The record gives the reactivity of an RNA of 177 nucleotides to 2A3 and DMS.
It was measured as part of the RMDB library TTRDEL.
For DMS, 12,060 sequencing reads were counted.
The RNA was probed in 150 mM KOAc, 10 mM MgCl2 and 150 mM bicine (pH 8.5) at 24 C.
DMS adducts were read by reverse transcription with MarathonRT.
Values cover nucleotides 27 to 126.
[RMDB]
RNA sequence: GGGAACGACUCGAGUAGAGUCGAAAAGAUAUGGAGUGGUAAGGGAGAGCAGUAUGUCGGAAACGACAUACGCUCAUCGAUCUUACGUAACAUCUCCUAAGUCAAAAGAGCAUCUUCGGAUGCUCAACAAAAAGAGAAUCUUCGGAUUCUCUUUUUGAAAAGAAACAACAACAACAAC
Reactivity to 2A3 in 0.01 (KOAc 150mM, MgCl2 10mM, bicine 150mM(pH8.5), 24C), signal-to-noise 4, nucleotides 027 to 126: g010a000u020a010u040g000g000a000g010u180g030g010u070a010a010g000g000g010a020g010a010g020c200a060g040u000a000u010g000u000c000g000g000a000a010a010c010g000a000c010a010u000a000c000g000c000u010c000a040u300c010g000a010u000c000u000u010a000c010g040u060a110a040c020a200u110c000u000c010c010u000a010a010g000u000c030a020a020a130a130g000a000g000c010a010u000c010u110u140c300g150g000a000u000g000c000u020c000a010a010
Reactivity to DMS in 0.01 (KOAc 150mM, MgCl2 10mM, bicine 150mM(pH8.5), 24C), signal-to-noise 7, nucleotides 027 to 126: g010a020u000a060u010g000g000a020g030u000g030g010u010a000a020g000g000g000a010g010a020g020c000a100g030u000a000u000g000u000c000g010g000a020a020a040c000g010a010c000a000u000a000c010g010c000u010c000a160u000c200g010a030u010c000u000u000a000c010g030u000a100a200c220a120u010c010u010c000c010u000a010a110g000u010c010a080a070a120a130g010a020g010c000a000u000c000u000u010c220g010g000a020u000g000c010u000c000a040a110